This 207-nucleotide RNA was probed chemically with 2A3. The data come from the RNA Mapping Database (RMDB), library OK3TST. The reactions ran in a buffer of 150 mM KOAc, 10 mM MgCl2 and 150 mM bicine (pH 8.5), at 24 C.
[RMDB]
RNA sequence: GGGAACGACUCGAGUAGAGUCGAAAAAUGAUUAUUGGCAGGUUCCAGACUGACCCUAGAUAUCAAUGGUCUGUGAUGGUUCUUAGUAAAGACUGCAAAUGGUCAGAUGAACUACUUUGAUUUCUUAAAUCCAUUUAAUAUCUUGGCAAAGUUGAUACUAGGAUGAUGCAUUCGUGCAUCAUCCUAGAAAAGAAACAACAACAACAAC
Reactivity to 2A3 in 0.01 (KOAc 150mM, MgCl2 10mM, bicine 150mM(pH8.5), 24C), signal-to-noise 2, nucleotides 027 to 156: a000u120g030a040u090u130a070u090u070g070g050c030a030g010g130u110u000c010c000a000g020a050c010u010g070a020c030c000c020u100a030g040a030u030a050u110c070a070a060u070g000g050u040c070u080g210u080g100a130u040g010g040u060u060c010u120u040a100g010u040a040a150a050g040a050c000u000g060c080a040a210a150u270g000g000u010c010a000g010a140u040g010a060a020c010u040a010c000u170u150u080g120a220u170u060u000c050u060u110a040a060a110u000c000c000a030u040u040u060a030a030u040a000u070c010u030u020g080g000c040a060a070a060g000u060u120g090a150u120a220